The data come from the RNA Mapping Database (RMDB), library TTRDES. This 177-nucleotide RNA was probed chemically with 2A3 and DMS. The reactions ran in a buffer of 150 mM KOAc, 10 mM MgCl2 and 150 mM bicine (pH 8.5), at 24 C. Values cover nucleotides 27 to 126.
RNA sequence: GGGAACGACUCGAGUAGAGUCGAAAAGAUAUGGAGCGGUGUGGAGCUAGAGGUCGGAAACGACCUGUAGCGUUGAAACAUCCGCUCCUAAGUCAAAAGAAGUAUCCGUCUUCGGACGGAUACUUCAUCGUUUACAUGAGUUCGCUCAUGUAAACGAAAAAGAAACAACAACAACAAC
Reactivity to 2A3 in 0.01 (KOAc 150mM, MgCl2 10mM, bicine 150mM(pH8.5), 24C), signal-to-noise 2, nucleotides 027 to 126: g000a000u020a000u060g000g010a000g010c020g000g000u000g020u020g000g060a000g000c020u010a010g010a000g300g010u010c000g000g000a020a010a000c010g010a010c010c030u030g150u010a010g000c020g020u140u060g010a000a010a010c010a020u080c000c000g020c000u000c000c000u000a000a000g000u000c000a000a030a000a190g010a010a000g000u010a000u000c000c000g040u000c010u060u140c300g120g000a000c000g000g010a000u000a000c000u010u000c000a000
Reactivity to DMS in 0.01 (KOAc 150mM, MgCl2 10mM, bicine 150mM(pH8.5), 24C), signal-to-noise 2, nucleotides 027 to 126: g000a000u000a020u010g010g010a000g040c000g010g010u010g010u000g020g000a050g030c000u000a030g000a020g000g010u000c000g030g000a000a010a030c000g010a010c000c000u000g000u000a010g020c000g010u010u020g000a090a210a030c010a010u020c010c010g020c000u000c000c000u000a000a060g000u010c010a110a080a160a170g010a010a000g010u000a000u000c000c000g000u000c000u010u010c270g020g000a010c000g000g010a010u000a000c000u000u000c000a030